Background
An RNA of 207 nucleotides, treated with DMS and 2A3 and read out base by base.

RNA sequence: GGGAACGACUCGAGUAGAGUCGAAAAUAUGAUUCGUCAUAGCAUAUGGGGUCGACAAUGAUGGAGCGUGGAGCUGGUACCUGAAGCCUCCACGGGUACACAGCGUUGAAACGCUCUUGAGUCGACGGAGGCACCCUAGGUAGGAGUUCGCUCCUAAACUAGUAUCGAGAUUCGUCUCGAUACUAGUAAAAGAAACAACAACAACAAC
Reactivity to DMS in 0.01 (KOAc 150mM, MgCl2 10mM, bicine 150mM(pH8.5), 24C), signal-to-noise 1, nucleotides 027 to 156: u000a030u000g000a040u010u020c150g050u000c020a050u010a080g020c060a100u000a090u000g000g030g040g000u000c130g030a020c010a120a290u010g030a180u000g040g010a010g000c010g020u000g020g000a150g060c010u000g020g030u000a010c010c000u020g020a020a050g080c010c020u010c020c000a180c020g010g000g010u000a000c000a090c050a000g000c010g000u000u010g010a150a070a030c000g010c020u000c010u000u000g020a040g010u000c010g020a060c050g000g000a050g030g060c050a010c010c000c010u000a060g020g000u010a090g030g010a100g020u000u000c100g010c010u040c000c010u000a010a100
Reactivity to 2A3 in 0.01 (KOAc 150mM, MgCl2 10mM, bicine 150mM(pH8.5), 24C), signal-to-noise 5, nucleotides 027 to 156: u110a020u040g070a060u110u150c180g100u060c120a060u080a110g050c060a050u100a130u300g100g040g110g020u060c040g000a010c020a080a300u020g000a000u000g000g010a000g000c000g000u000g010g010a010g000c000u000g020g000u010a000c000c000u010g040a130a030g020c000c000u020c000c010a040c000g000g010g000u010a010c300a010c000a020g000c000g090u130u010g010a000a000a000c000g000c000u000c000u000u000g000a000g000u000c000g000a020c000g000g010a000g000g020c010a020c010c000c020u050a080g050g120u080a010g000g030a020g010u110u120c190g070c070u030c000c000u020a090a050
Source: RMDB library RNAMAK, as collected in RNAgym. For DMS, 3,639 sequencing reads were counted. The 2A3 profile rests on 4,594 reads. Reactivities are rounded to 0.1 and cut off at 0 and 3.